The record gives the reactivity of an RNA of 177 nucleotides to 2A3. For 2A3 the reverse transcriptase was SuperScript II with manganese. The RNA was probed in 150 mM KOAc, 10 mM MgCl2 and 150 mM bicine (pH 8.5) at 24 C.

[RMDB]
RNA sequence: GGGAACGACUCGAGUAGAGUCGAAAAGGACGAGUUUGUAAAUCUCAUUUCAAGGCUGCGCGGAAAUGAGGUGGUACUUCCUUCGAAGGACAUUGGUGAGGCCGAUGAGGACACCAGCAGCAGCAACGCUCCGAUCGCAUUUCGAUGCGAUCGGAGCAAAAGAAACAACAACAACAAC
Reactivity to 2A3 in 0.01 (KOAc 150mM, MgCl2 10mM, bicine 150mM(pH8.5), 24C), signal-to-noise 1, nucleotides 027 to 126: g030g090a070c010g050a120g000u090u130u070g030u290a030a060a190u010c000u000c000a000u000u000u000c020a040a030g140g000c000u000g000c000g050c050g000g000a000a000a000u000g000a000g070g000u030g000g080u210a050c000u000u090c000c000u000u300c100g050a000a010g140g000a000c040a190u060u100g000g020u000g030a200g300g170c010c000g000a110u290g060a010g000g000a000c000a000c000c070a020g000c080a080g000c000a000g030c060a100a030c040